This 207-nucleotide RNA was probed chemically with 2A3 and DMS.
RNA sequence: GGGAACGACUCGAGUAGAGUCGAAAAGGUGUCGGCUGCGAGGCGGAACGUCGUAUCGUCGAUAAGGUCGCGCGACAGACCACGGCCCCACUCGUAGUUCGACUGGCAUUCGUACAGGAUGUGCGCCGGGUUCAUGGCAUGGAUUUCGUGCUGAUUGAUGUAUGUUAGCUUUCGAGCUAACAUACAUAAAAGAAACAACAACAACAAC
Reactivity to 2A3 in 0.01 (KOAc 150mM, MgCl2 10mM, bicine 150mM(pH8.5), 24C), signal-to-noise 5, nucleotides 027 to 156: g080g010u090g000u060c000g000g010c000u000g000c010g010a000g010g040c140g060g010a140a070c050g020u010c000g020u050a070u080c030g040u010c020g020a060u100a200a110g090g050u090c050g000c040g000c040g110a020c030a070g060a020c020c090a010c040g020g000c000c000c000c010a030c000u010c000g000u000a000g010u130u290c010g010a000c000u010g020g000c010a010u040u030c040g050u130a070c050a110g010g040a030u030g020u040g070c070g010c030c010g040g010g000u020u060c060a090u140g030g000c020a020u030g050g080a120u050u130u160c060g020u050g020c030u050g020a180u110u130g040
Reactivity to DMS in 0.01 (KOAc 150mM, MgCl2 10mM, bicine 150mM(pH8.5), 24C), signal-to-noise 3, nucleotides 027 to 156: g020g010u000g040u000c020g000g010c020u020g010c030g020a050g020g020c080g050g010a090a130c080g000u000c060g050u010a100u000c090g020u000c020g030a110u000a100a090g000g010u000c030g000c080g030c030g020a110c050a130g020a090c020c030a060c010g010g000c020c090c020c010a100c050u000c010g000u000a030g000u000u000c010g030a050c010u020g010g030c010a120u000u000c030g010u010a150c120a170g020g000a070u010g000u010g020c040g050c050c020g020g020g000u000u000c050a090u000g020g020c020a300u030g010g010a140u000u000u000c030g020u000g020c030u020g010a140u000u000g000
Values cover nucleotides 27 to 156. The DMS profile rests on 8,491 reads. As a SHAPE reagent, 2A3 marks flexible, mostly unpaired nucleotides at the ribose 2'-OH. 2A3 adducts were read by reverse transcription with SuperScript II with manganese.